[RMDB]
RNA sequence: GGGAACGACUCGAGUAGAGUCGAAAAAGAACAUGAGAGAGAGGACCAAUGCUGGUAUAUUUGACAACCUUGAUCGGAUACUUGGGUUCAGGUCUCUGAUCUCAAGGACACACUCUAUUUUUAAGGCAACGUAUCUAACCUUCGGGUUAGAUACGUUAAAAGAAACAACAACAACAAC
Reactivity to DMS in 0.01 (KOAc 150mM, MgCl2 10mM, bicine 150mM(pH8.5), 24C), signal-to-noise 3, nucleotides 027 to 126: a060g000a070a070c080a070u010g010a050g010a110g000a070g020a090g030g000a090c040c050a060a080u000g020c110u010g000g000u010a050u000a080u000u000u010g000a090c160a090a080c050c010u010u000g000a040u010c040g020g000a030u000a010c000u000u000g020g010g010u000u010c010a010g010g000u000c160u010c000u000g010a040u000c090u000c070a000a030g010g020a120c170a070c120a100c090u000c030u000a060u000u000u000u020u010a070a150g010g000c160
Reactivity to 2A3 in 0.01 (KOAc 150mM, MgCl2 10mM, bicine 150mM(pH8.5), 24C), signal-to-noise 2, nucleotides 027 to 126: a010g050a040a020c050a070u200g000a010g000a020g010a010g010a010g060g040a030c010c000a030a060u140g060c050u010g050g040u040a100u020a060u160u140u120g080a050c040a020a040c040c010u020u020g000a050u040c010g000g030a010u030a050c010u010u020g010g060g050u300u230c010a030g070g040u010c090u010c000u090g000a020u000c020u020c060a000a000g010g010a020c020a000c000a000c080u050c050u060a200u110u090u030u060u150a050a020g130g000c010
Chemical mapping of a 177-nucleotide RNA with DMS and 2A3. Reactivities are given for positions 27 through 126.